[RMDB]
RNA sequence: GGGAACGACUCGAGUAGAGUCGAAAAUAAGAGCAUGUACGAAUCACGAUAUGAGAGUUCCUGGUGAAUCCCGGGUACAAGGAAAGGUAUUAAUCUCCCACUGCGUUCCCAUGCAGUAGGGAUAUAAAGUUGUAGGCUUAUUCGUAAGCCUACAACUAAAAGAAACAACAACAACAAC
Reactivity to 2A3 in 0.01 (KOAc 150mM, MgCl2 10mM, bicine 150mM(pH8.5), 24C), signal-to-noise 3, nucleotides 027 to 126: u150a030a020g050a040g060c030a060u070g020u120a040c030g050a170a020u030c040a020c150g040a030u040a070u270g110a100g020a010g040u010u020c030c000u030g040g030u080g080a070a050u090c040c000c000g080g010g000u050a040c030a050a020g110g010a080a040a050g050g000u070a080u120u140a150a100u070c020u010c040c000c000a000c000u000g000c010g020u070u030c010c000c000a010u030g000c010a020g000u240a180g000g000g020a000u010a010u000a020a010
Reactivity to DMS in 0.01 (KOAc 150mM, MgCl2 10mM, bicine 150mM(pH8.5), 24C), signal-to-noise 3, nucleotides 027 to 126: u010a070a060g000a100g000c070a040u000g030u000a060c070g010a080a090u010c060a060c080g000a120u010a100u000g010a080g000a190g000u000u000c000c020u010g020g010u000g010a080a100u000c090c040c030g010g000g030u010a020c070a070a060g000g000a030a050a050g020g000u020a060u000u000a060a080u000c110u000c000c000c000a020c010u000g000c000g010u000u000c000c020c030a110u000g000c000a000g000u000a070g030g000g000a020u000a020u000a060a090
This 177-nucleotide RNA was probed chemically with 2A3 and DMS. The DMS profile rests on 3,322 reads. High DMS reactivity at an A or C suggests that its Watson-Crick edge is free. Conditions: 150 mM KOAc, 10 mM MgCl2 and 150 mM bicine (pH 8.5), 24 C. For 2A3 the reverse transcriptase was SuperScript II with manganese. It was measured as part of the RMDB library M2PK90.